[RMDB]
Conditions: 150 mM KOAc, 10 mM MgCl2 and 150 mM bicine (pH 8.5), 24 C. Chemical mapping of a 207-nucleotide RNA with DMS and 2A3.
RNA sequence: GGGAACGACUCGAGUAGAGUCGAAAACCGUAGGACCUACCCAGAGCAACAGCGUCACUUAUCUACACUUCGAAAGAGGUGUAGGUUUGGUGACGACAUGCUCUGGAUGGUCCUAAACGGAAAGGCUAACAAUCUACUUCGGUAGAUUGUUAGCCAACUCUAAUAAGAGGUUCGCCUCUUAUUAGAGAAAAGAAACAACAACAACAAC
Reactivity to DMS in 0.01 (KOAc 150mM, MgCl2 10mM, bicine 150mM(pH8.5), 24C), signal-to-noise 2, nucleotides 027 to 156: c010c000g020u010a040g010g000a020c000c000u010a050c030c010c010a000g010a000g030c000a040a100c090a190g030c020g000u000c000a020c010u000u010a030u010c000u000a020c010a010c010u000u010c010g040a180a170a260g030a000g020g020u000g030u000a030g010g000u000u000u000g040g020u000g010a010c000g010a030c090a300u000g020c000u000c000u000g080g000a030u000g000g020u000c000c010u000a000a000a030c030g030g020a090a070a080g000g050c000u010a010a000c000a010a010u010c000u000a010c010u010u000c300g020g000u000a020g010a020u000u000g000u010u000a020g020c000c000a000a010
Reactivity to 2A3 in 0.01 (KOAc 150mM, MgCl2 10mM, bicine 150mM(pH8.5), 24C), signal-to-noise 4, nucleotides 027 to 156: c000c000g000u010a010g010g000a000c000c000u030a050c010c010c000a000g000a000g000c000a010a140c060a160g050c010g010u000c000a000c000u010u010a000u020c000u000a000c000a000c000u010u000c010g090a140a080a070g000a010g010g000u000g000u010a000g010g020u050u090u130g030g000u010g000a000c000g010a000c000a020u010g000c010u000c000u000g000g000a000u000g000g000u000c000c000u000a000a000a000c000g050g040a170a080a100g000g000c010u010a000a000c000a000a000u020c000u010a010c010u030u100c260g050g000u000a000g000a000u000u000g000u000u000a000g000c000c000a000a000